[RMDB]
RNA sequence: GGGAACGACUCGAGUAGAGUCGAAAAGCUCUCACACCUCCUGGAGCCAGCACCCUCCAGGAUAUUUCCAUGAGGAAAGGAUGGUGGCAGCCCUAGUGACCCAUGGGACACGGCUGGAUCCACGUUCAUCACACGCAUCCUUCGGGAUGCGUGUGAUAAAAGAAACAACAACAACAAC
Reactivity to DMS in 0.01 (KOAc 150mM, MgCl2 10mM, bicine 150mM(pH8.5), 24C), signal-to-noise 1, nucleotides 027 to 126: g000c090u080c000u010c080a150c090a090c150c020u030c000c000u000g000g000a060g050c170c010a080g040c010a000c150c300c000u000c000c020a000g010g000a110u080a020u000u000u000c000c030a300u010g100a130g030g000a000a040a090g040g000a000u000g020g000u000g010g000c000a070g010c000c040c180u040a000g000u000g000a040c010c070c050a130u000g040g050g040a020c190a130c080g000g000c100u000g000g000a120u050c000c000a000c030g050u010u050c110
Reactivity to 2A3 in 0.01 (KOAc 150mM, MgCl2 10mM, bicine 150mM(pH8.5), 24C), signal-to-noise 2, nucleotides 027 to 126: g030c050u040c020u020c010a170c030a020c060c030u090c010c000u020g040g010a000g000c020c030a030g000c010a010c000c020c000u100c000c000a010g000g010a000u000a030u060u030u000c000c000a050u220g030a060g010g090a060a000a050g080g020a070u090g020g010u020g030g020c000a000g000c000c000c020u110a060g000u010g050a030c050c020c020a130u220g070g060g070a050c000a010c000g000g000c000u000g000g020a070u040c000c000a040c010g000u040u060c030
Chemical mapping of a 177-nucleotide RNA with DMS and 2A3. Values cover nucleotides 27 to 126. It was measured as part of the RMDB library RFM100. The RNA was probed in 150 mM KOAc, 10 mM MgCl2 and 150 mM bicine (pH 8.5) at 24 C.